[RMDB]
RNA sequence: GGGAACGACUCGAGUAGAGUCGAAAAAGGGAAGAAAAUAAUUUAGAAAGGAGAUUCCGCCCCAGCUUGCGGUGCGGCCGAAAGGCUGUAUGGCAUCCCGGAGAGGGGAGGCAAGGCGAAAGCCAAAAACGGUACACCAUCUUCGGAUGGUGUACAAGUACAAAGGUAACUUCGGUUACCUUUGUACAAAAGAAACAACAACAACAAC
Reactivity to 2A3 in 0.01 (KOAc 150mM, MgCl2 10mM, bicine 150mM(pH8.5), 24C), signal-to-noise 1, nucleotides 027 to 156: a000g040g000g020a010a030g080a020a180a040a080u210a130a220u120u300u250a100g040a090a050a100g060g010a120g010a050u090u000c010c000g010c000c000c000c000a030g060c050u070u110g020c040g080g040u010g000c020g000g010c000c000g050a040a040a000g010g000c010u010g060u020a010u050g110g000c000a010u050c000c040c000g000g010a090g000a050g000g010g000g000a010g010g000c050a060a040g000g000c010g060a040a020a000g010c020c040a040a010a020a030a040c120g020g010u000a000c000a000c000c010a000u000c020u030u030c020g080g020a010u000g000g000u010g000u000a000c000a000a000